[RMDB]
RNA sequence: GGGAACGACUCGAGUAGAGUCGAAAAGUGACUGAGAAACAGUCGCCACGAUCGACGAUCCACGGGAGACACUAGCGUGGUGCGGGAAGUAAGACGAUAACCGUGAUCUCGUGUAAGUGUUAGGACGACAUUGAUUCAUUUUCGAAUGAAUCAAUGUAAAAGAAACAACAACAACAAC
Reactivity to DMS in 0.01 (KOAc 150mM, MgCl2 10mM, bicine 150mM(pH8.5), 24C), signal-to-noise 1, nucleotides 027 to 126: g000u000g000a000c000u010g000a150g010a160a130a150c030a030g030u010c020g010c000c070a090c160g020a130u020c050g010a070c080g000a150u010c020c000a080c050g020g020g020a090g030a050c060a030c030u010a050g000c010g000u020g000g000u010g000c040g030g020g020a070a140g000u000a090a040g000a300c270g000a150u000a260a300c000c000g000u000g000a260u000c010u000c000g000u000g000u110a040a060g010u010g000u010u020a040g000g000a190c250g000
Reactivity to 2A3 in 0.01 (KOAc 150mM, MgCl2 10mM, bicine 150mM(pH8.5), 24C), signal-to-noise 3, nucleotides 027 to 126: g040u030g000a000c000u020g010a030g180a270a110a030c000a000g000u010c010g020c000c020a120c080g050a130u140c020g040a060c050g040a150u010c000c020a020c040g040g030g030a090g020a010c000a000c020u020a010g030c000g000u020g000g010u020g020c030g000g010g000a090a060g060u150a090a070g220a120c030g010a050u130a250a080c000c000g000u000g250a060u000c000u000c000g000u000g000u110a090a040g000u000g000u050u030a040g020g020a020c010g000